An RNA of 177 nucleotides, treated with DMS and 2A3 and read out base by base. For DMS, 11,563 sequencing reads were counted.

RNA sequence: GGGAACGACUCGAGUAGAGUCGAAAACGAUCAAGCGAUUGAACGCAUGGGGGCGAUUCGAGGAUGGCUCUGCCAGGGGACGCACGAGUUAAGCCAUUUCAAUGAGACGCUGAACUUAUUGGAGACGCGAAUUCUAUAUAUUCGUAUAUAGAAUUCGAAAAGAAACAACAACAACAAC
Reactivity to DMS in 0.01 (KOAc 150mM, MgCl2 10mM, bicine 150mM(pH8.5), 24C), signal-to-noise 8, nucleotides 027 to 126: c060g010a090u010c050a070a060g010c150g000a120u010u000g000a070a080c060g000c060a080u010g010g010g010g010g010c060g010a080u010u000c060g010a100g000g000a110u000g010g010c030u000c040u000g020c020c050a100g000g000g000g010a070c090g000c060a060c070g000a080g010u000u000a070a130g010c020c030a090u000u000u010c040a020a040u000g000a030g010a070c110g010c140u010g010a080a100c030u000u000a030u000u000g000g010a050g000a110c210g000
Reactivity to 2A3 in 0.01 (KOAc 150mM, MgCl2 10mM, bicine 150mM(pH8.5), 24C), signal-to-noise 6, nucleotides 027 to 126: c020g020a060u070c070a070a040g040c020g080a060u020u170g080a150a030c020g000c060a090u090g030g000g020g020g010c020g030a050u070u050c030g020a040g060g020a060u060g020g010c020u030c050u100g030c000c010a040g030g000g010g010a010c030g010c020a030c040g030a040g020u030u060a060a010g010c020c020a070u020u060u040c030a040a040u070g010a020g010a040c060g020c220u080g030a120a060c020u030u010a030u060u100g040g010a040g010a020c050g010

The 2A3 profile rests on 9,622 reads.